Structure probing data (DMS) for a 177-nucleotide construct.
The data come from the RNA Mapping Database (RMDB), library TTRDES.
In probing experiments dimethyl sulfate is read out at A N1 and C N3, which are open when not base-paired.
Conditions: 150 mM KOAc, 10 mM MgCl2 and 150 mM bicine (pH 8.5), 24 C.
[RMDB]
RNA sequence: GGGAACGACUCGAGUAGAGUCGAAAAGAUAUGGAUCUCUCCCUCUCACCUAUGAAGCAGCUCGGAAACGAGCUGUGGAGGUGGGGGCGGAGAGGAUCCUAAGUCAAAAGCAGAGUUCGCUCUGCAACGAAUGCUUUCUGUUCGCAGAAAGCAUUCGAAAAGAAACAACAACAACAAC
Reactivity to DMS in 0.01 (KOAc 150mM, MgCl2 10mM, bicine 150mM(pH8.5), 24C), signal-to-noise 2, nucleotides 027 to 126: g000a080u010a300u000g000g000a000u000c000u000c000u020c020c000c010u000c000u000c000a010c010c010u000a270u010g000a140a260g000c000a000g010c000u000c000g000g000a120a140a250c000g010a000g020c000u000g010u010g010g000a010g020g050u010g030g000g000g010g000c140g040g000a010g000a040g010g000a000u000c000c000u000a070a130g000u010c040a130a100a160a160g010c000a010g020a040g020u010u030c200g000c040u010c010u000g000c030a040a090